[RMDB]
Structure probing data (DMS and 2A3) for a 177-nucleotide construct. The data come from the RNA Mapping Database (RMDB), library OK1LIB.
RNA sequence: GGGAACGACUCGAGUAGAGUCGAAAAUCGCCAGCAAUCGAAUGACAGCGAAACAGAGAGGAGAAAAAGCGAAAUGUGUUUGGCCACAAUGGGUUAGGAUGUCAUUCGGUAUGCCCUCUUUGUCAGACCUCGUAAAUGAUUUCGAUCAUUUACGAGGAAAAGAAACAACAACAACAAC
Reactivity to DMS in 0.01 (KOAc 150mM, MgCl2 10mM, bicine 150mM(pH8.5), 24C), signal-to-noise 4, nucleotides 027 to 126: u020c060g010c010c020a120g010c040a110a000u010c020g020a020a020u010g000a040c000a040g000c020g030a100a110a110c030a010g000a280g010a050g000g010a050g000a040a040a030a050a080g030c030g000a070a080a130u030g020u000g000u010u010u000g000g000c030c010a040c040a060a130u020g010g000g030u000u010a150g030g010a090u000g010u000c010a020u000u000c010g000g040u000a030u020g010c000c020c030u000c040u020u000u020g010u010c110a060g010a300
Reactivity to 2A3 in 0.01 (KOAc 150mM, MgCl2 10mM, bicine 150mM(pH8.5), 24C), signal-to-noise 7, nucleotides 027 to 126: u060c020g080c020c000a010g000c010a010a020u080c020g000a010a000u010g000a010c000a010g120c040g120a070a100a020c060a020g090a020g010a050g080g040a070g120a080a120a000a020a010g060c080g120a120a150a120u180g040u020g050u060u110u050g050g000c010c010a060c040a120a160u100g120g000g060u100u070a070g060g070a080u030g010u010c000a000u000u000c000g000g000u130a200u110g020c020c000c000u010c000u060u120u090g090u060c030a030g010a150